[RMDB]
Conditions: 150 mM KOAc, 10 mM MgCl2 and 150 mM bicine (pH 8.5), 24 C.
The record gives the reactivity of an RNA of 207 nucleotides to 2A3.
Reactivities are given for positions 27 through 156.
RNA sequence: GGGAACGACUCGAGUAGAGUCGAAAAAUCACCGGUGGGGAACCCCAUACGGCAACGGCGUAGAAGUAAAUGCUAACCAAUCCGUGGUAUCUACGCGACGGAACAUCCACGGAUAACUCUAACAAGGCUAAGCGUCUCGGUUUCGACCGAGACGCAAGUCUAAAUCGUGAUUCGUCACGAUUUAGACAAAAGAAACAACAACAACAAC
Reactivity to 2A3 in 0.01 (KOAc 150mM, MgCl2 10mM, bicine 150mM(pH8.5), 24C), signal-to-noise 1, nucleotides 027 to 156: a000u100c000a010c030c000g100g000u030g000g030g040g150a130a130c120c000c000c000a040u160a220c000g010g010c020a020a030c030g020g000c000g010u010a000g010a080a000g020u150a100a050a000u130g010c080u080a060a050c080c050a040a060u000c000c000g000u000g000g010u020a020u040c010u010a010c000g040c060g080a060c080g100g000a010a020c000a000u010c000c000a000c000g000g000a000u020a020a030c040u000c020u070a020a210c060a190a020g040g060c050u170a020a070g000c000g020u000c000u010c000g080g000u020u070u100c120g110a020c030c000g000a000g010a000c000g010c000a000a010

2A3 adducts were read by reverse transcription with SuperScript II with manganese.